The record gives the reactivity of an RNA of 207 nucleotides to 2A3. It was measured as part of the RMDB library M2RFPK.
[RMDB]
RNA sequence: GGGAACGACUCGAGUAGAGUCGAAAAGUAUGGAUGCCACCGUGACGGCUCAACCACACAAGUGCCAACGAUAACGAGGCGCUCGCUAUUGCUGCGUAACUGACGGCCUGACGGUCUGACGUUACAAAAAACGAAAAGUGGUUCGCCACUUUUCGAACAGACAGGUGUUGUUCGCAACACCUGUCUGAAAAGAAACAACAACAACAAC
Reactivity to 2A3 in 0.01 (KOAc 150mM, MgCl2 10mM, bicine 150mM(pH8.5), 24C), signal-to-noise 1, nucleotides 027 to 156: g180u120a040u110g030g040a040u080g010c020c010a070c040c090g080u070g040a090c240g050g040c040u080c100a030a140c040c020a020c000a030c000a050a090g030u030g070c020c010a100a030c040g130a180u100a270a090c100g010a050g030g060c040g030c050u030c000g040c030u050a020u300u120g060c050u050g020c020g030u000a000a020c020u040g020a010c010g000g000c010c000u150g070a060c100g030g000u010c020u000g000a000c000g000u000u000a010c010a000a040a000a000a000a000c040g000a000a000a000a000g000u000g090g000u010u040c160g050c060c000a000c000u020u010u010u000c000g020a060a030
Reactivities are given for positions 27 through 156.